[RMDB]
RNA sequence: GGGAACGACUCGAGUAGAGUCGAAAAACUGGAAGUAUAACUACGUCGCGGCCCAACAAGCCGGUCGUAGGAAUAUUUUGCAUGUCGGAUUUCUUGAAAGUAUGACUGAACAGGAACUUAGCGAAUUCUAUGAAUUCUGCUGUCAGUACGACCAAAGAUUCCUCGUAUUGUUCGCAAUACGAGGAAUAAAAGAAACAACAACAACAAC
Reactivity to 2A3 in 0.01 (KOAc 150mM, MgCl2 10mM, bicine 150mM(pH8.5), 24C), signal-to-noise 2, nucleotides 027 to 156: a010c050u030g030g010a000a010g020u020a020u000a070a060c000u000a000c010g000u000c050g000c050g140g000c050c020c030a040a040c100a020a010g000c000c030g040g010u020c020g000u000a000g000g010a000a020u020a000u010u130u020u130g080c050a040u110g070u010c020g140g040a150u010u060u000c000u000u040g060a090a060a030g020u040a040u170g070a020c000u030g020a080a010c000a020g060g010a110a010c050u080u090a070g050c070g080a070a030u110u010c060u040a160u300g070a060a070u060u000c030u080g130c000u000g030u020c000a010g010u020a070c020g000a030c020c090a100a080a020g060
Reactivity to DMS in 0.01 (KOAc 150mM, MgCl2 10mM, bicine 150mM(pH8.5), 24C), signal-to-noise 1, nucleotides 027 to 156: a140c090u010g040g020a090a070g020u020a020u000a030a300c000u000a010c020g010u000c040g070c000g040g040c010c000c020a150a090c150a200a050g020c020c000g030g010u000c010g040u000a080g000g000a100a030u010a020u000u000u000u000g040c020a040u000g020u000c010g010g010a300u000u000u000c030u000u000g010a140a080a050g020u000a050u000g010a070c000u020g000a060a080c030a110g020g000a050a120c060u020u010a070g040c080g030a050a070u000u000c030u000a030u010g000a040a120u000u000c010u000g030c000u010g040u000c010a070g100u000a080c030g000a100c040c020a050a080a170g000